RNA sequence: GGGAACGACUCGAGUAGAGUCGAAAAGGACUCCGUGAGGAGUCCGUGCAGCGAGAGCUGCACAAGGGCUUAGUGUGACUCGGUGCCCCUCCUCUACGAUGUUGAGUAGAGGAGAGUAGUCGUCUCACGAUUUAUAGUGAGACUGACCAGAGUCAGAAUGAUAGUACUCAUUCGUGAGUACUAUCAUAAAAGAAACAACAACAACAAC
Reactivity to 2A3 in 0.01 (KOAc 150mM, MgCl2 10mM, bicine 150mM(pH8.5), 24C), signal-to-noise 3, nucleotides 027 to 156: g010g000a000c000u000c000c010g010u050g030a050g000g000a000g000u000c000c000g010u000g000c000a010g000c000g030a040g000a010g040c000u010g020c000a000c040a010a020g010g000g020c030u100u290a070g060u160g020u000g050a000c010u000c000g000g070u100g000c000c000c000c000u000c000c000u000c000u000a010c010g070a080u140g040u150u100g060a020g000u000a010g000a000g010g000a010g000a000g000u000a010g000u000c000g010u000c000u000c000a000c000g020a030u030u300u210a210u180a070g000u000g000a010g000a010c020u040g000a000c010c020a040g000a010g000u000c000a000g060a020
Reactivity to DMS in 0.01 (KOAc 150mM, MgCl2 10mM, bicine 150mM(pH8.5), 24C), signal-to-noise 2, nucleotides 027 to 156: g040g000a020c000u000c000c000g020u000g000a220g020g010a020g020u000c000c000g010u000g010c010a020g010c000g000a150g020a260g010c000u000g020c010a010c000a050a070g010g000g000c020u000u000a060g010u010g000u000g000a060c000u000c010g000g030u000g010c020c010c010c010u000c010c000u010c000u000a020c010g010a260u000g010u010u000g030a300g010u000a020g000a020g020g000a000g000a050g010u010a040g020u000c000g010u000c000u020c000a010c000g010a250u010u000u000a190u010a160g010u000g000a010g000a030c010u010g030a020c000c020a080g000a080g010u010c010a050g010a160
Chemical mapping of a 207-nucleotide RNA with 2A3 and DMS. Values cover nucleotides 27 to 156. Source: RMDB library OK3TST, as collected in RNAgym.